[RMDB]
RNA sequence: GGGAACGACUCGAGUAGAGUCGAAAAACAGCGAAAGGCACAAGACUUCGAACAUUAUAGCAGUUAGUAGUUGUCUAAACCCAUUGCAAUAUAUGGGACAGUAGAGGUCGCAAGCCUAUACUGUGCGAAAAGUCGCAAGGUUUCGACCUUGCGACAAACCAUAUGGGAUAUUCGUAUCCCAUAUGGUAAAAGAAACAACAACAACAAC
Reactivity to 2A3 in 0.01 (KOAc 150mM, MgCl2 10mM, bicine 150mM(pH8.5), 24C), signal-to-noise 6, nucleotides 027 to 156: a010c030a010g010c020g060a140a030a010g050g020c030a040c030a080a040g030a050c030u060u050c120g040a070a030c030a080u150u180a100u150a080g050c070a020g010u040u100a020g020u050a020g000u050u040g020u000c030u060a080a090a120c000c000c000a000u000u020g010c010a020a020u010a000u010a000u160g010g000g010a010c000a000g000u020a000g000a000g030g000u120c050g060c130a060a000g000c000c000u000a000u000a000c000u000g010u010g010c010g040a100a000a010a070g000u000c000g000c000a000a010g000g000u030u060u050c070g010a060c000c000u000u000g000c000g000a000c000a010a000
Reactivity to DMS in 0.01 (KOAc 150mM, MgCl2 10mM, bicine 150mM(pH8.5), 24C), signal-to-noise 4, nucleotides 027 to 156: a050c040a080g020c030g030a080a080a130g020g020c000a110c070a060a090g010a040c030u000u000c040g020a080a110c040a100u000u000a090u000a080g010c070a090g010u010u000a080g030u020a120g000u000u000g010u000c010u010a050a090a150c000c000c000a020u000u000g000c060a160a170u000a160u000a010u000g020g000g020a090c010a040g000u000a020g000a050g070g050u010c060g020c300a080a230g020c000c010u000a060u000a010c010u000g010u000g020c040g000a040a040a080a110g010u000c030g050c000a010a020g000g010u000u000u010c300g010a070c000c000u000u000g010c000g030a000c000a010a050
Background:
The record gives the reactivity of an RNA of 207 nucleotides to 2A3 and DMS. For 2A3 the reverse transcriptase was SuperScript II with manganese.